About this RNA
Structure probing data (DMS and 2A3) for a 177-nucleotide construct. For DMS the reverse transcriptase was MarathonRT.
[RMDB]
RNA sequence: GGGAACGACUCGAGUAGAGUCGAAAAGAACUCACCAGCAAAUGUUUACGACAAGAUUCCACAUUUGCAAAUUACGUAGCGAUCUUCCAGAAUCUUGUCGAAACGUUCCCAAUCGCUACGCCCUAAACCUUUUCGUAUAGUUCGCUAUACGAAAAGGAAAAGAAACAACAACAACAAC
Reactivity to DMS in 0.01 (KOAc 150mM, MgCl2 10mM, bicine 150mM(pH8.5), 24C), signal-to-noise 3, nucleotides 027 to 126: g000a100a090c070u000c040a130c050c090a230g000c080a040a090a070u000g020u010u000u000a240c090g010a020c010a000a010g010a010u000u000c030c270a080c160a110u000u010u000g020c100a060a080a090u010u000a040c040g010u000a000g000c010g010a030u020c100u010u000c200c130a060g020a030a020u000c000u000u000g010u010c020g010a010a100a170c030g000u000u000c000c010c000a070a010u000c010g000c010u000a010c010g010c000c010c010u000a030a090a110
Reactivity to 2A3 in 0.01 (KOAc 150mM, MgCl2 10mM, bicine 150mM(pH8.5), 24C), signal-to-noise 3, nucleotides 027 to 126: g040a060a040c020u020c050a060c010c030a020g050c060a050a060a080u140g030u140u240u180a080c010g010a000c000a000a010g000a020u040u000c070c040a060c030a220u130u140u270g030c020a060a050a050u160u120a040c000g000u000a000g020c010g000a010u020c060u170u010c150c010a030g010a000a010u000c000u020u000g000u010c000g020a040a030a000c020g010u000u000c000c010c000a000a020u010c090g000c000u020a010c000g020c000c000c000u130a100a080a060